[RMDB]
RNA sequence: GGGAACGACUCGAGUAGAGUCGAAAAGGAACGUGCUACGAAUCGGUAGUGUCCGAAAGGGGGCUGUCUGCAUGGCCGCAGCCAAGAUCGGACGGGCCGCGACUGCCGCCUUAUGGCGAUUUCCGAACCCUAUUAAUAAGUUCGCUUAUUAAUAGGGAAAAGAAACAACAACAACAAC
Reactivity to DMS in 0.01 (KOAc 150mM, MgCl2 10mM, bicine 150mM(pH8.5), 24C), signal-to-noise 8, nucleotides 027 to 126: g000g000a040a050c100g010u020g020c010u000a030c070g000a130a120u040c090g000g000u000a040g010u020g010u010c000c000g000a070a070a030g000g000g000g000g020c020u010g010u000c010u040g050c040a100u030g020g010c000c020g010c050a170g000c020c000a100a160g000a130u030c140g000g010a210c040g000g000g020c000c000g010c010g000a030c020u000g010c000c000g000c010c000u000u010a040u040g010g010c130g000a180u010u010u000c000c000g010a120a250
Reactivity to 2A3 in 0.01 (KOAc 150mM, MgCl2 10mM, bicine 150mM(pH8.5), 24C), signal-to-noise 9, nucleotides 027 to 126: g050g000a090a030c070g070u130g050c020u040a030c050g100a190a160u100c040g030g000u020a030g050u030g090u120c000c010g030a060a020a010g020g000g010g000g000c010u020g010u030c070u150g030c050a140u240g020g000c020c030g180c110a020g000c010c010a090a030g220a200u250c140g000g010a030c000g000g010g010c000c000g010c000g010a010c010u030g000c000c020g130c010c000u020u030a060u040g020g000c030g070a150u020u030u000c000c000g010a050a050